[RMDB]
RNA sequence: GGGAACGACUCGAGUAGAGUCGAAAAUACUCUCCAUAUCGCCUGAAAGAGUAAAGAUUACAUCUAGUAUAAAUGUUGGUACACCAAUCUUUACUGGCCAUAUCUUCUGAAAGCGUAUCUGGUAUAACUAUGCGAAAGCAUUCGUGCUUUCGCAUAGAAAAGAAACAACAACAACAAC
Reactivity to 2A3 in 0.01 (KOAc 150mM, MgCl2 10mM, bicine 150mM(pH8.5), 24C), signal-to-noise 2, nucleotides 027 to 126: u040a010c000u000c000u000c000c010a000u020a000u080c010g020c020c030u060g080a110a110a030g070a000g010u080a020a110a000g000a030u010u120a030c040a060u070c050u090a030g030u060a080u040a220a150a080u210g010u100u050g030g020u080a050c100a050c070c020a030a000u020c000u010u010u020a000c000u010g020g040c010c000a040u070a030u120c020u080u010c040u040g050a090a020a010g030c020g020u070a030u000c030u040g010g050u090a060u060a210a040
Reactivity to DMS in 0.01 (KOAc 150mM, MgCl2 10mM, bicine 150mM(pH8.5), 24C), signal-to-noise 2, nucleotides 027 to 126: u010a090c090u010c010u010c010c010a030u010a050u000c040g010c010c040u000g000a130a120a110g000a050g010u000a050a060a030g010a040u000u000a130c140a080u010c040u030a090g020u000a090u010a060a060a040u000g000u010u000g020g020u000a150c180a090c120c090a050a010u010c080u000u010u000a010c010u010g000g020c120c010a090u010a060u000c050u000u010c050u000g000a130a080a060g010c060g000u000a050u000c050u000g010g030u020a050u000a110a190

An RNA of 177 nucleotides, treated with 2A3 and DMS and read out base by base. Conditions: 150 mM KOAc, 10 mM MgCl2 and 150 mM bicine (pH 8.5), 24 C. For 2A3 the reverse transcriptase was SuperScript II with manganese.